[RMDB]
An RNA of 207 nucleotides, treated with 2A3 and read out base by base.
RNA sequence: GGGAACGACUCGAGUAGAGUCGAAAAGCUGCGUGAAACCUCGCUGCUUUCUUGGCUAACUUUCAGCGAGGUGAGGCAAGGCGGCAAAAAAAAGUUGGGAGCAGCAACGGCAAGCAAAAAAAAAGUUACAAGUUGCGAUGGUUCGCCAUCGCAACAACGUACAACGUAGCUUCGGCUACGUUGUACGAAAAGAAACAACAACAACAAC
Reactivity to 2A3 in 0.01 (KOAc 150mM, MgCl2 10mM, bicine 150mM(pH8.5), 24C), signal-to-noise 1, nucleotides 027 to 156: g010c000u000g000c000g070u160g060a050a020a060c020c000u000c000g000c000u010g000c070u020u070u070c030u090u190g020g030c080u060a060a050c010u140u110u060c030a000g010c000g000a000g010g000u010g000a010g010g000c040a000a030g060g010c090g000g000c050a040a040a000a060a060a000a000a080g020u010u000g030g000g000a000g010c020a000g000c060a020a010c080g000g000c030a020a080g000c030a140a000a010a010a000a000a000a000a120g030u040u010a030c080a160a120g010u000u000g000c010g000a000u000g000g000u020u000c110g000c090c000a000u010c000g000c000a000a000c000a000a000
Reactivities are given for positions 27 through 156. For 2A3 the reverse transcriptase was SuperScript II with manganese. It was measured as part of the RMDB library M2RFPK.